Source information
The record gives the reactivity of an RNA of 177 nucleotides to DMS and 2A3. The data come from the RNA Mapping Database (RMDB), library OK2TRN. Conditions: 150 mM KOAc, 10 mM MgCl2 and 150 mM bicine (pH 8.5), 24 C. The DMS profile rests on 2,314 reads.

RNA sequence: GGGAACGACUCGAGUAGAGUCGAAAAUUGCUAAAUCAGAUGUUCAAAGCAAGGACCUGGGAUCCAUAUAUCUGGCAGGAAUUGCUAGAUCCAGACAAGUUUAGCAAAUGCGAUCAGAAUGGAAUGGGACGAUGAGAAAAUUCGUUUUCUCAUCGUCAAAAGAAACAACAACAACAAC
Reactivity to DMS in 0.01 (KOAc 150mM, MgCl2 10mM, bicine 150mM(pH8.5), 24C), signal-to-noise 3, nucleotides 027 to 126: u000u000g010c000u000a020a060a040u000c040a100g030a230u000g000u000u010c050a080a120a170g010c070a060a040g010g020a120c030c020u010g000g010g010a070u010c050c070a080u000a120u000a090u000c040u000g000g010c030a030g010g010a120a100u000u010g010c000u000a110g010a020u000c060c060a070g000a160c190a080a120g010u000u000u000a000g020c020a020a030a090u000g000c040g010a040u000c060a060g000a060a030u010g010g000a060a080u020g020g000
Reactivity to 2A3 in 0.01 (KOAc 150mM, MgCl2 10mM, bicine 150mM(pH8.5), 24C), signal-to-noise 3, nucleotides 027 to 126: u030u000g000c000u000a010a030a060u100c040a050g080a270u070g050u070u030c040a160a030a090g060c030a010a080g050g040a050c000c000u050g050g040g010a060u040c070c090a040u120a010u020a000u170c010u020g110g000c030a010g090g090a190a100u100u030g000c000u010a020g020a040u000c010c030a060g060a110c030a100a040g000u020u010u010a000g000c000a000a030a070u120g030c060g030a090u080c020a040g070a160a050u120g050g110a130a110u060g130g070